[RMDB]
Chemical mapping of a 177-nucleotide RNA with 2A3 and DMS. For DMS the reverse transcriptase was MarathonRT. It was measured as part of the RMDB library TTRDEL. Values are in units of 0.01, from 0 to 300, in steps of 10. High 2A3 reactivity points to a flexible backbone, as in loops and unpaired stretches. The RNA was probed in 150 mM KOAc, 10 mM MgCl2 and 150 mM bicine (pH 8.5) at 24 C. 2A3 adducts were read by reverse transcription with SuperScript II with manganese.
RNA sequence: GGGAACGACUCGAGUAGAGUCGAAAAGAUAUGGACGCAUCCACACACAGCGAAGAACUCGGAAACGAGGGAGCUGGAGUGGAGUGCGUCCUAAGUCAAAACGAGAACUUGUUCGCAAGUUCUCGAACAAUACUAGGACCUUCGGGUCCUAGUAUUGAAAAGAAACAACAACAACAAC
Reactivity to 2A3 in 0.01 (KOAc 150mM, MgCl2 10mM, bicine 150mM(pH8.5), 24C), signal-to-noise 5, nucleotides 027 to 126: g020a010u090a040u160g000g000a000c000g000c010a000u020c010c000a010c000a010c000a000c000a010g040c010g280a300a030g050a100a050c000u000c000g010g030a060a060a060c010g000a010g010g010g010a010g000c010u010g010g010a020g010u000g000g010a030g010u030g000c000g000u010c000c000u000a010a000g010u000c010a010a010a050a090c020g000a000g000a000a000c010u010u010g030u110u130c170g030c220a000a010g000u000u000c000u000c000g000a010a000
Reactivity to DMS in 0.01 (KOAc 150mM, MgCl2 10mM, bicine 150mM(pH8.5), 24C), signal-to-noise 7, nucleotides 027 to 126: g000a040u010a300u010g010g010a000c010g020c000a060u000c000c000a010c010a050c150a300c010a010g000c000g010a120a120g010a100a180c000u000c000g010g000a130a130a180c000g000a020g000g000g010a070g020c000u000g010g000a080g020u000g000g000a020g010u000g020c000g000u010c000c010u010a010a070g010u010c040a070a050a090a170c020g000a010g010a010a000c000u000u000g000u000u010c230g010c010a000a000g000u000u000c000u000c000g000a030a070